[RMDB]
Chemical mapping of a 207-nucleotide RNA with 2A3. The RNA was probed in 150 mM KOAc, 10 mM MgCl2 and 150 mM bicine (pH 8.5) at 24 C. The data come from the RNA Mapping Database (RMDB), library M2RFPK.
RNA sequence: GGGAACGACUCGAGUAGAGUCGAAAACCAUUCCUUAUACCUUGAGUAUUGCUGAAUUCAGUUUAGCGUGCAUGCUCUUGGCAAUUCUCAUAGUGAUUGUCAAAUUUGGAGUUACUUAUUCGUCAAUAAAACACUACCACGUUCGCGUGGUAGUGAACUAGUAUGCGACCUUCGGGUCGCAUACUAGAAAAGAAACAACAACAACAAC
Reactivity to 2A3 in 0.01 (KOAc 150mM, MgCl2 10mM, bicine 150mM(pH8.5), 24C), signal-to-noise 2, nucleotides 027 to 156: c020c000a060u020u010c010c000u060u140a040u020a230c010c040u050u070g020a060g000u040a050u040u060g020c020u010g010a180a080u290u080c100a130g160u040u120u150a010g020c020g020u060g060c030a080u000g000c000u000c000u050u000g000g000c000a010a010u130u010c020u010c010a030u150a080g180u090g150a000u020u030g010u030c020a030a080a130u080u080u120g010g000a010g060u140u160a080c030u180u170a180u250u180c100g070u040c060a080a260u110a190a120a030a030c000a000c000u000a000c000c000a000c020g010u020u010c200g010c000g050u000g010g050u010a000g000u000g030a000a000